Chemical mapping of a 207-nucleotide RNA with DMS and 2A3. The reactions ran in a buffer of 150 mM KOAc, 10 mM MgCl2 and 150 mM bicine (pH 8.5), at 24 C. High DMS reactivity at an A or C suggests that its Watson-Crick edge is free. Source: RMDB library OK3TST, as collected in RNAgym.

[RMDB]
RNA sequence: GGGAACGACUCGAGUAGAGUCGAAAAUGAGCCAUGGAGCACACACGGUACGGGAAUUUGGACAUAUUAACCCUGAAUACUUCAUGAGUUCUCAAUGUUGUAUUAGCAAUUAUCUCGCCCGUAGUAUUUUCAGUAGGCGUAGUAGGUGUUACAGCACCCGAAAAUAGAGAUUCGUCUCUAUUUUCGGAAAAGAAACAACAACAACAAC
Reactivity to DMS in 0.01 (KOAc 150mM, MgCl2 10mM, bicine 150mM(pH8.5), 24C), signal-to-noise 2, nucleotides 027 to 156: u010g000a110g040c090c010a070u000g010g020a070g020c050a060c030a110c060a090c060g010g030u000a050c070g020g000g000a050a080u000u020u010g000g000a140c130a130u000a140u000u010a120a120c050c010c000u020g000a120a190u000a020c010u000u000c020a030u000g000a130g000u010u000c010u000c050a080a130u010g010u000u000g000u000a080u010u000a110g010c010a060a060u000u010a060u010c000u000c030g000c040c000c020g000u000a160g040u000a100u000u000u000u030c070a170g030u010a050g010g030c000g020u020a030g020u000a030g030g020u000g000u000u000a070c070a080g000c020a100c110
Reactivity to 2A3 in 0.01 (KOAc 150mM, MgCl2 10mM, bicine 150mM(pH8.5), 24C), signal-to-noise 4, nucleotides 027 to 156: u100g000a010g010c010c000a000u020g010g000a030g030c080a000c010a000c030a020c170g060g050u150a070c050g020g000g040a070a060u140u110u180g070g040a060c080a070u240a060u080u200a060a100c010c010c000u020g040a080a030u060a110c010u000u000c000a010u010g020a030g150u130u050c070u010c040a060a120u080g010u010u000g020u020a100u120u060a060g020c020a010a100u110u060a090u130c030u010c010g000c000c000c040g000u030a040g060u030a240u070u120u120u170c060a050g040u080a040g060g000c020g000u010a010g000u010a040g030g050u040g030u070u110a050c040a070g030c010a060c010